[RMDB]
RNA sequence: GGGAACGACUCGAGUAGAGUCGAAAAGAAACGAACUCGAAAGAGUUCGAACGACGGGAAGCGAUGAGCAGCGAAAGAAACGCUGCGCGCCGAAUCGCACGCCGAACCGUCGAAUAAAGAAGAAAGAACUCAGUCACGAUUUCGAUCGUGACUGAGUAAAAGAAACAACAACAACAAC
Reactivity to 2A3 in 0.01 (KOAc 150mM, MgCl2 10mM, bicine 150mM(pH8.5), 24C), signal-to-noise 2, nucleotides 027 to 126: g120a010a100a000c040g000a000a000c000u010c000g000a090a110a020g000a020g000u030u030c000g000a040a000c020g000a000c010g000g000g060a130a130g040c000g160a170u050g020a110g000c000a000g000c050g150a020a220a250g100a160a180a000c000g000c000u000g000c000g000c020g010c040c020g090a060a040u120c000g010c000a040c030g070c000c010g000a040a000c000c000g000u020c090g000a070a010u110a020a000a000g300a060a000g020a010a160a020g120a010
Reactivity to DMS in 0.01 (KOAc 150mM, MgCl2 10mM, bicine 150mM(pH8.5), 24C), signal-to-noise 2, nucleotides 027 to 126: g000a000a130a140c000g000a040a000c010u100c000g000a100a060a100g000a000g000u000u000c000g030a000a300c020g000a030c020g000g000g000a200a040g010c030g000a100u000g000a210g000c000a000g010c020g090a080a150a060g000a120a140a170c040g000c000u000g000c060g010c030g000c010c080g000a030a000u020c130g000c040a160c050g020c050c010g000a070a300c000c000g040u000c020g000a200a130u100a130a070a060g000a060a020g000a110a120a130g000a130
Source information: Structure probing data (2A3 and DMS) for a 177-nucleotide construct. For DMS the reverse transcriptase was MarathonRT. For 2A3, 996 sequencing reads were counted. The data come from the RNA Mapping Database (RMDB), library OK1LIB. Conditions: 150 mM KOAc, 10 mM MgCl2 and 150 mM bicine (pH 8.5), 24 C.